[RMDB]
RNA sequence: GGGAACGACUCGAGUAGAGUCGAAAACUAGAGUCAGUCUCAGGAAGGACUAGGAAGGAGACUCUUCAGAGGAGACUCUUCCUCUCUUCUCGAUCCUCUCUCUAGUCCUCUGACUAGGACUCUCUAGGACUUCGAUCGAGAAGAGAGAGAGUCCUGACAACGUGUGUAACUUCGGUUACACACGUUGAAAAGAAACAACAACAACAAC
Reactivity to DMS in 0.01 (KOAc 150mM, MgCl2 10mM, bicine 150mM(pH8.5), 24C), signal-to-noise 2, nucleotides 027 to 156: c010u000a020g010a060g010u010c050a060g020u000c010u000c060a160g040g020a120a070g000g000a040c010u000a050g020g030a080a050g010g000a130g010a080c030u000c020u010u000c060a300g000a090g000g000a120g000a070c010u000c040u000u010c070c010u000c000u000c000u000u000c010u000c020g020a060u000c000c050u000c020u000c010u000c010u000a010g000u000c000c010u000c030u000g010a120c080u000a090g020g000a090c030u000c020u010c020u000a060g030g010a100c100u000u000c060g010a050u000c000g030a080g010a050a030g000a060g020a050g020a030g000a080g000u000c010c020u000g030a240
Reactivity to 2A3 in 0.01 (KOAc 150mM, MgCl2 10mM, bicine 150mM(pH8.5), 24C), signal-to-noise 6, nucleotides 027 to 156: c000u010a010g000a000g060u080c110a010g010u010c060u040c140a040g080g040a130a040g010g010a010c020u040a020g050g040a050a030g040g030a040g010a020c010u010c000u140u090c090a070g030a040g080g040a060g010a030c000u020c000u100u090c020c010u000c000u000c000u000u000c000u000c000g010a010u010c020c010u070c010u000c000u010c010u020a000g010u010c020c010u010c020u030g030a050c060u090a050g040g050a010c010u010c000u010c010u060a020g020g030a030c040u120u070c130g010a020u010c000g000a000g000a010a000g000a000g000a000g000a000g000a000g000u000c000c010u030g010a020
Structure probing data (DMS and 2A3) for a 207-nucleotide construct. For 2A3 the reverse transcriptase was SuperScript II with manganese. For DMS, 5,061 sequencing reads were counted. The RNA was probed in 150 mM KOAc, 10 mM MgCl2 and 150 mM bicine (pH 8.5) at 24 C. The 2A3 profile rests on 11,072 reads. It was measured as part of the RMDB library OK3TST.